Conditions: 150 mM KOAc, 10 mM MgCl2 and 150 mM bicine (pH 8.5), 24 C. Chemical mapping of a 177-nucleotide RNA with DMS. The DMS profile rests on 647 reads.
[RMDB]
RNA sequence: GGGAACGACUCGAGUAGAGUCGAAAACGUUCAAUGCUUUGUGGGUGUGCUUUACCCACUCUUAUACAGUAGUUAAGUGGCAAAAAGGGUGUCAAAGGGAAAGGAAAACCAGAAGAAAAGCAAAAUAACAUGGCUAGCAGUUCGCUGCUAGCCAUGUAAAAGAAACAACAACAACAAC
Reactivity to DMS in 0.01 (KOAc 150mM, MgCl2 10mM, bicine 150mM(pH8.5), 24C), signal-to-noise 1, nucleotides 027 to 126: c120g020u020u000c080a100a120u000g020c130u000u000u010g000u000g000g000g000u000g000u000g000c150u020u010u000a090c020c000c010a020c020u000c050u020u000a060u000a150c100a060g000u000a060g050u000u030a060a080g000u000g000g000c140a050a050a020a140a020g020g010g050u020g010u000c050a020a060a050g000g020g000a030a060a080g010g000a070a050a100a150c060c050a070g010a100a160g020a050a020a050a050g010c080a110a010a050a050u030a050